[RMDB]
RNA sequence: GGGAACGACUCGAGUAGAGUCGAAAAUACUUGCUAGACUCUCACAUAGAAGUAAAACAUAUUGAUUUGCGUCCCAGGCAAAUCUUGGAGAGGCCCGAGCCUGACUUGAAGUUUAUUUCUAUACCACGAGUGUAUGACCUUUCGAGGUCAUAUAUUCAAAAGAAACAACAACAACAAC
Reactivity to DMS in 0.01 (KOAc 150mM, MgCl2 10mM, bicine 150mM(pH8.5), 24C), signal-to-noise 9, nucleotides 027 to 126: u010a070c090u000u000g010c050u000a100g010a100c050u000c030u000c090a130c140a060u000a030g000a040a030g010u000a020a030a040a070c070a100u010a100u010u000g000a020u000u000u000g010c010g020u000c010c010c020a270g000g000c000a010a010a010u000c000u000u000g010g010a080g010a070g010g010c020c140c180g010a120g010c010c010u000g000a100c040u000u000g010a090a130g000u000u000u000a030u010u000u000c010u000a030u010a140c160c120a080c210
Reactivity to 2A3 in 0.01 (KOAc 150mM, MgCl2 10mM, bicine 150mM(pH8.5), 24C), signal-to-noise 5, nucleotides 027 to 126: u040a010c030u050u120g120c020u040a040g040a120c020u030c010u020c090a050c020a090u040a010g030a040a010g020u050a020a100a060a040c030a040u180a110u160u110g020a000u010u000u010g000c010g040u080c020c000c000a000g000g020c000a000a010a020u010c000u010u080g080g020a090g010a010g020g010c030c080c060g030a060g030c000c020u070g060a120c020u040u110g100a110a000g030u030u030u040a050u010u050u030c020u020a040u020a090c010c060a070c150
The record gives the reactivity of an RNA of 177 nucleotides to DMS and 2A3.
For 2A3, 9,238 sequencing reads were counted.
It was measured as part of the RMDB library OK2TRN.
For DMS the reverse transcriptase was MarathonRT.
The reactions ran in a buffer of 150 mM KOAc, 10 mM MgCl2 and 150 mM bicine (pH 8.5), at 24 C.
For DMS, 33,926 sequencing reads were counted.